[RMDB]
RNA sequence: GGGAACGACUCGAGUAGAGUCGAAAAGCUUUUUUUUCGGAUUAGGCGUGGAGGCGAAAGUCACCCUCCUCGCAUCGCAAGUUCGUGCUUGCGACUUACACGUAGGGCGAGGGGUGGACGAAAGUUGAAAACACGAUGUUGUUCGCAACAUCGUGAAGUUAACAGCUUGAUUCGUCAAGCUGUUAACAAAAGAAACAACAACAACAAC
Reactivity to 2A3 in 0.01 (KOAc 150mM, MgCl2 10mM, bicine 150mM(pH8.5), 24C), signal-to-noise 6, nucleotides 027 to 156: g010c050u120u050u000u020u010u000u050u110c100g070g010a080u060u110a120g030g000c050g010u040g030g020a040g030g010c090g040a100a050a030g050u030c040a090c060c010c000u030c010c000u000c000g000c000a010u010c000g000c000a010a010g000u190u300c150g190u300g100c010u010u010g010c010g000a010c000u040u100a050c110a030c090g190u200a130g050g080g000c050g000a000g010g010g020g070u080g020g000a010c030g050a090a060a020g020u030u050g050a050a060a020a010c020a000c000g010a000u000g000u000u010g020u030u050c170g040c080a000a010c000a000u020c010g000u000g000a010a000
Reactivity to DMS in 0.01 (KOAc 150mM, MgCl2 10mM, bicine 150mM(pH8.5), 24C), signal-to-noise 2, nucleotides 027 to 156: g020c030u000u000u000u000u000u000u000u000c060g040g010a100u000u000a040g030g000c060g040u000g020g010a060g010g020c060g020a080a050a120g020u000c020a090c030c010c010u000c000c010u010c010g040c110a050u000c010g080c000a000a020g010u000u010c290g040u000g010c020u000u000g020c020g020a060c060u000u000a100c100a070c140g040u010a080g010g030g000c040g000a040g040g010g000g010u000g000g000a100c050g000a060a020a190g020u010u000g000a090a060a070a170c010a020c000g000a030u000g020u000u000g010u000u000c290g000c000a030a020c000a000u020c010g030u000g000a010a040
Background:
Chemical mapping of a 207-nucleotide RNA with 2A3 and DMS. In probing experiments dimethyl sulfate is read out at A N1 and C N3, which are open when not base-paired. For DMS, 4,791 sequencing reads were counted. The reactions ran in a buffer of 150 mM KOAc, 10 mM MgCl2 and 150 mM bicine (pH 8.5), at 24 C. For 2A3 the reverse transcriptase was SuperScript II with manganese.